[RMDB]
RNA sequence: GGGAACGACUCGAGUAGAGUCGAAAAUAUGGGCAGUUCGCUGCCCAUACGAGCGCAGUCCGGCACUAUGAGCCCGCAGCGUUGGUGCGUAGCCGCGGUGCAGAGACCAAGCCUUCGGGCUUGGUAAUAUUCUCUUAGAAUUCGUUCUAAGAGAAUAAAAAGAAACAACAACAACAAC
Reactivity to DMS in 0.01 (KOAc 150mM, MgCl2 10mM, bicine 150mM(pH8.5), 24C), signal-to-noise 8, nucleotides 027 to 126: u000a000u000g000g010g010c000a010g020u000u010c220g020c010u000g010c000c000c000a000u000a000c060g010a090g010c060g020c070a070g000u000c030c030g010g010c030a060c080u000a080u010g010a150g000c020c040c020g010c030a040g000c040g010u000u010g030g010u000g010c130g000u010a170g010c020c020g010c070g000g010u000g010c040a110g010a140g000a040c000c000a000a010g010c000c000u000u010c210g030g010g020c000u000u000g000g000u000a010a040
Reactivity to 2A3 in 0.01 (KOAc 150mM, MgCl2 10mM, bicine 150mM(pH8.5), 24C), signal-to-noise 5, nucleotides 027 to 126: u070a010u010g000g000g000c000a010g020u060u110c150g070c120u000g000c000c000c000a000u000a000c010g020a020g040c070g000c050a020g040u030c020c010g030g030c030a010c040u120a100u170g070a030g040c010c000c010g000c020a040g040c040g070u130u290g060g020u090g030c070g050u100a030g010c010c010g010c040g010g060u050g010c020a020g030a000g010a110c000c010a000a000g010c000c000u050u060c190g100g010g000c010u000u000g000g000u000a000a000

About this RNA:
Chemical mapping of a 177-nucleotide RNA with DMS and 2A3. High DMS reactivity at an A or C suggests that its Watson-Crick edge is free. As a SHAPE reagent, 2A3 marks flexible, mostly unpaired nucleotides at the ribose 2'-OH.